[RMDB]
RNA sequence: GGGAACGACUCGAGUAGAGUCGAAAACGUAAUAUGUUCGCAUAUUACGAAAUCUCCAAUCAUCGCUAACCAGGAUCCUCCGAUGAAUUAAAGCCCUCGGUAAAAGGAGCGGGUUCGCCCGCUCCAAGAGUAUACAUCAGUUCGCUGAUGUAUACUCAAAAGAAACAACAACAACAAC
Reactivity to 2A3 in 0.01 (KOAc 150mM, MgCl2 10mM, bicine 150mM(pH8.5), 24C), signal-to-noise 3, nucleotides 027 to 126: c010g020u010a010a010u020a010u000g010u030u020c090g000c100a000u000a010u000u010a000c000g000a080a030a050u060c070u010c010c030a020a090u060c030a040u080c040g000c060u070a060a050c030c010a060g060g050a100u030c000c010u000c040c000g050a050u060g050a040a150u190u140a180a070a030g030c000c020c000u020c030g080g050u080a050a040a060a150g010g010a000g000c000g000g000g000u010u030c100g050c010c000c000g000c010u010c000c000a010a000
Reactivity to DMS in 0.01 (KOAc 150mM, MgCl2 10mM, bicine 150mM(pH8.5), 24C), signal-to-noise 4, nucleotides 027 to 126: c020g010u000a010a000u000a010u000g000u000u010c210g020c000a000u000a000u000u000a000c010g010a020a080a110u010c040u000c010c100a090a140u000c060a060u000c030g000c060u000a080a080c090c050a070g010g010a090u000c030c030u000c040c000g000a030u000g000a090a100u000u010a070a100a200g000c040c020c010u010c050g010g000u010a060a070a110a110g000g010a020g020c000g010g000g010u000u020c220g010c000c000c000g020c000u000c000c000a000a040

An RNA of 177 nucleotides, treated with 2A3 and DMS and read out base by base. Conditions: 150 mM KOAc, 10 mM MgCl2 and 150 mM bicine (pH 8.5), 24 C. DMS adducts were read by reverse transcription with MarathonRT. It was measured as part of the RMDB library M2PK50. The 2A3 profile rests on 3,709 reads. 2A3 adducts were read by reverse transcription with SuperScript II with manganese.